[RMDB]
RNA sequence: GGGAACGACUCGAGUAGAGUCGAAAAUCUGUGUCCAGUAGUCCUGUUCCAGCUGCUGGUCGUCCUUCGUGAUGGCUAGUAGCUGUGUUUCGGUUGAUUCUGGACAGUUCGACGACCUAUGGAGCCAUCAAAAUGUCUAGUUCGCUAGACAUUUUGAAAAAGAAACAACAACAACAAC
Reactivity to 2A3 in 0.01 (KOAc 150mM, MgCl2 10mM, bicine 150mM(pH8.5), 24C), signal-to-noise 9, nucleotides 027 to 126: u080c060u070g130u020g030u070c000c000a010g020u060a000g030u050c010c020u040g010u010u000c000c000a000g000c000u010g000c000u000g010g000u000c000g000u000c010c030u300u260c130g160u300g100a000u010g000g010c000u000a000g010u010a000g000c000u000g000u000g000u000u010u020c000g010g000u060u170g020a030u060u020c000u000g000g000a000c000a000g000u010u030c010g020a030c010g030a050c000c000u010a030u050g040g000a010g010c000c020a050
Reactivity to DMS in 0.01 (KOAc 150mM, MgCl2 10mM, bicine 150mM(pH8.5), 24C), signal-to-noise 5, nucleotides 027 to 126: u010c060u010g020u010g010u010c000c010a010g010u030a040g000u000c020c000u000g000u000u000c010c000a010g010c010u010g010c000u000g010g000u000c000g020u000c000c010u050u040c300g010u030g010a010u000g000g010c010u000a000g020u000a000g010c010u000g000u010g010u010u000u000c010g010g000u010u040g000a070u010u000c000u000g000g000a020c010a040g000u010u010c040g010a230c050g000a080c060c010u000a040u010g010g000a030g010c040c060a190